[RMDB]
RNA sequence: GGGAACGACUCGAGUAGAGUCGAAAAGGUCCGCUGUUCGCAGCGGACCAAAAAAAAUCAGCGGUAUCGAGGCGUAAAAUAUUACCGCUGAACGCCUCGAUAAAACCGUGCCGUUCGCGGCACGGAACGCUAAUUAAGUGUUCGCACUUAAUUAGCGAAAAGAAACAACAACAACAAC
Reactivity to DMS in 0.01 (KOAc 150mM, MgCl2 10mM, bicine 150mM(pH8.5), 24C), signal-to-noise 2, nucleotides 027 to 126: g000g030u010c000c000g020c010u000g030u000u010c140g020c000a030g020c000g000g000a010c000c010a000a000a020a000a010a010a020a050u000c090a040g000c040g010g000u010a000u000c010g010a010g010g000c000g040u000a040a110a060a050u010a080u010u000a130c030c020g030c060u000g010a040a010c000g030c000c000u000c010g020a010u000a010a040a150a130c000c010g010u010g000c000c000g030u000u010c200g020c000g010g000c000a000c010g000g000a020a040
Reactivity to 2A3 in 0.01 (KOAc 150mM, MgCl2 10mM, bicine 150mM(pH8.5), 24C), signal-to-noise 2, nucleotides 027 to 126: g000g010u000c010c010g010c000u020g040u040u100c270g000c100a000g010c000g010g000a040c000c040a000a000a010a000a010a000a010a000u040c030a020g020c010g020g010u030a010u020c000g010a010g040g000c010g020u050a040a120a090a050u270a100u160u140a090c020c050g000c030u010g000a000a000c010g010c000c000u020c000g000a010u010a020a050a000a030c000c000g010u000g010c000c000g010u000u040c240g000c010g060g000c000a000c000g000g010a020a020